[RMDB]
RNA sequence: GGGAACGACUCGAGUAGAGUCGAAAAGAAAGAAAGAGGUGCAUUGACAAGGGCUCUUCUAGGGUAGUACACUCUUUGUUGUUUUAUACUGGGAGAGCAUGUAGAACUCAAAAGAUGUUUUUGCUAACCUAUCCUCUGAAUUCGUUCAGAGGAUAGGAAAAGAAACAACAACAACAAC
Reactivity to DMS in 0.01 (KOAc 150mM, MgCl2 10mM, bicine 150mM(pH8.5), 24C), signal-to-noise 7, nucleotides 027 to 126: g010a080a080a090g010a060a070a070g000a030g000g020u010g020c060a060u020u000g010a090c120a090a080g020g010g000c000u000c000u000u000c010u000a010g000g000g030u000a020g010u000a020c020a030c020u010c300u020u010u020g000u020u010g000u000u000u000u000a020u020a030c010u000g000g000g010a010g010a020g010c020a040u010g010u000a060g010a060a080c050u010c050a070a050a120a120g000a080u010g010u000u000u000u000u000g020c120u010a110a170
Reactivity to 2A3 in 0.01 (KOAc 150mM, MgCl2 10mM, bicine 150mM(pH8.5), 24C), signal-to-noise 9, nucleotides 027 to 126: g060a020a040a000g090a030a080a020g030a010g010g060u090g050c050a100u110u160g060a070c050a070a100g120g050g010c000u000c000u020u000c000u010a010g000g060g010u020a010g040u030a020c030a020c020u110c130u130u160u150g080u060u010g000u010u040u020u000a050u010a030c010u000g000g000g000a010g000a000g000c010a000u020g000u020a030g030a090a030c020u020c100a070a060a020a030g120a080u070g050u010u010u010u030u030g060c050u050a030a030
Conditions: 150 mM KOAc, 10 mM MgCl2 and 150 mM bicine (pH 8.5), 24 C. The record gives the reactivity of an RNA of 177 nucleotides to DMS and 2A3. DMS (dimethyl sulfate) methylates the pairing face of unpaired adenines and cytosines. DMS adducts were read by reverse transcription with MarathonRT.